[RMDB]
RNA sequence: GGGAACGACUCGAGUAGAGUCGAAAAGAAAAAGCGGAAGUGGCGAAAUCGGUAGACGCAGUUGAUCUAAGAUCAACCGUAGAAAUACGUGCUGGUUCGAGUCCAGCCUUCCGCACCGAAAAAAAAACAUUUAAUCUUACUUCGGUAAGAUUAAAUGAAAAGAAACAACAACAACAAC
Reactivity to 2A3 in 0.01 (KOAc 150mM, MgCl2 10mM, bicine 150mM(pH8.5), 24C), signal-to-noise 2, nucleotides 027 to 126: g050a000a080a020a040a020g010c000g000g010a000a000g000u010g010g000c020g020a000a000a020u250c110g160g130u080a010g000a010c010g030c010a010g000u000u010g020a010u040c040u230a200a110g000a030u000c010a000a000c020c000g000u000a000g020a020a070a000u020a000c000g000u000g000c000u010g000g000u000u000c010g000a010g010u000c000c000a000g010c010c000u010u030c000c010g000c000a000c000c000g060a090a010a000a000a000a000a000a000a000
Reactivity to DMS in 0.01 (KOAc 150mM, MgCl2 10mM, bicine 150mM(pH8.5), 24C), signal-to-noise 5, nucleotides 027 to 126: g000a090a110a070a150a130g010c010g010g010a010a010g010u000g000g010c000g000a000a010a000u000c220g010g010u010a000g010a300c010g000c010a130g010u000u000g000a010u000c000u010a090a160g010a010u000c000a010a010c000c000g010u000a010g000a130a070a090u000a010c020g000u000g000c010u000g000g010u000u000c000g000a300g000u000c000c000a000g010c000c000u000u000c000c000g020c010a130c040c030g000a010a000a000a000a030a010a040a030a200